[RMDB]
RNA sequence: GGGAACGACUCGAGUAGAGUCGAAAAUCCUAAUCGUUCGCGAUUAGGAAAAUAAGGAAACGUUCGUGCUGGCGCGACUAAAUGAGUGCUCGCCCUCAUAAAAAACUCAGCUCUUCGGAGCUGAGAACGAAUUCAACUUGUUCGCAAGUUGAAUUCGAAAAGAAACAACAACAACAAC
Reactivity to 2A3 in 0.01 (KOAc 150mM, MgCl2 10mM, bicine 150mM(pH8.5), 24C), signal-to-noise 1, nucleotides 027 to 126: u000c000c000u030a010a020u020c030g020u030u030c260g000c020g110a010u020u040a000g040g040a050a050a050a010u180a070a050g060g010a150a020a040c040g000u030u070c090g010u090g050c040u040g060g000c050g000c020g050a020c010u070a090a190a300u220g040a050g040u020g010c000u010c060g010c010c000c010u050c020a120u290a060a150a010a000a000a000c000u000c010a010g030c000u000c000u000u160c210g100g000a000g000c010u010g010a000g010a010a010
Reactivity to DMS in 0.01 (KOAc 150mM, MgCl2 10mM, bicine 150mM(pH8.5), 24C), signal-to-noise 1, nucleotides 027 to 126: u000c000c000u000a030a000u000c000g010u000u020c240g010c010g020a000u000u000a000g010g010a000a050a100a070u010a080a150g000g000a110a030a150c120g030u000u010c070g040u010g000c070u010g040g000c020g000c050g020a140c130u000a120a130a110u000g010a070g030u020g000c070u010c160g020c030c030c000u000c020a100u000a000a060a090a120a100a100c010u000c000a000g020c000u000c000u020u000c140g030g010a040g000c010u000g010a000g000a040a030